[RMDB]
RNA sequence: GGGAACGACUCGAGUAGAGUCGAAAAUGUCCCCCCAGGAAUGGCGGGACCCCACUCGACAGGGUCCGCGUACCAUCCUUUCUUACCUGAUGGCCGGCAUGGUCCCAGCCUCCUCGCUGGCGCCGGCGUAGUCAGACCUUCGGGUCUGACAAAAGAAACAACAACAACAAC
Reactivity to 2A3 in 0.01 (KOAc 150mM, MgCl2 10mM, bicine 150mM(pH8.5), 24C), signal-to-noise 5, nucleotides 027 to 129: u200g100u050c000c010c000c020c000c020a020g000g040a130a120u010g040g020c020g050g000g000a000c000c000c010c010a100c080u190c080g190a100c060a080g000g030g000u000c010c000g150c010g080u060a090c000c020a010u010c000c010u040u080u070c100u090u030a120c010c020u060g080a130u070g180g000c020c000g000g010c040a140u240g040g080u170c030c000c000a000g000c000c010u170c010c000u130c060g000c000u000g000g000c000g000c020c010g000g000c000g000u000a020
Reactivity to DMS in 0.01 (KOAc 150mM, MgCl2 10mM, bicine 150mM(pH8.5), 24C), signal-to-noise 4, nucleotides 027 to 129: u040g050u010c050c000c020c050c040c040a060g010g000a080a030u020g020g040c070g000g000g000a000c000c000c000c100a210c190u000c260g060a080c230a280g000g070g000u000c020c040g000c050g000u050a080c050c020a000u030c020c000u000u000u000c080u030u020a100c120c030u070g020a060u070g000g000c000c020g000g000c030a000u040g000g000u040c130c020c020a050g040c000c010u060c100c060u050c180g010c000u010g000g020c050g030c010c010g010g010c040g030u000a040
An RNA of 170 nucleotides, treated with 2A3 and DMS and read out base by base.
The 2A3 profile rests on 7,227 reads.
The reactions ran in a buffer of 150 mM KOAc, 10 mM MgCl2 and 150 mM bicine (pH 8.5), at 24 C.
It was measured as part of the RMDB library 15KLIB.
DMS (dimethyl sulfate) methylates the pairing face of unpaired adenines and cytosines.